Structure probing data (DMS and 2A3) for a 177-nucleotide construct.
DMS adducts were read by reverse transcription with MarathonRT.
2A3 adducts were read by reverse transcription with SuperScript II with manganese.
Conditions: 150 mM KOAc, 10 mM MgCl2 and 150 mM bicine (pH 8.5), 24 C.
The data come from the RNA Mapping Database (RMDB), library OK2TRN.
High DMS reactivity at an A or C suggests that its Watson-Crick edge is free.
RNA sequence: GGGAACGACUCGAGUAGAGUCGAAAACGCGAUGUUUUUCUCAUCAACUGAACGAAACACUUUAUCUGGUUCAUCGAUACGUUGAAUCGCUUUAUCAGUUGGUGCUUGUACGACUAUUUUUGAAUACCUCUAGAUUCAAUUUCGAUUGAAUCUAGAGAAAAGAAACAACAACAACAAC
Reactivity to DMS in 0.01 (KOAc 150mM, MgCl2 10mM, bicine 150mM(pH8.5), 24C), signal-to-noise 9, nucleotides 027 to 126: c060g010c160g010a080u010g010u010u000u000u000u000c030u000c000a030u000c020a010a020c010u010g000a030a150c110g000a040a030a170c070a050c140u010u000u010a060u000c120u000g030g000u000u010c140a060u000c060g010a060u000a040c270g010u010u000g010a020a130u000c000g010c220u000u000u010a110u010c010a000g020u000u000g010g010u000g000c240u000u000g010u000a050c090g010a100c090u000a050u000u010u000u000u010g010a120a120u010a120c200
Reactivity to 2A3 in 0.01 (KOAc 150mM, MgCl2 10mM, bicine 150mM(pH8.5), 24C), signal-to-noise 9, nucleotides 027 to 126: c070g020c070g110a170u190g090u010u040u000u080u010c030u010c000a010u010c000a000a010c000u010g020a070a030c060g080a090a080a010c100a040c090u150u220u180a170u110c110u130g090g000u080u050c020a030u060c030g150a160u080a300c090g010u020u000g010a010a010u000c020g000c000u100u100u070a120u030c000a000g000u010u010g020g010u020g030c060u090u120g050u070a030c030g080a030c060u090a180u190u140u020u090u160g100a140a060u060a150c000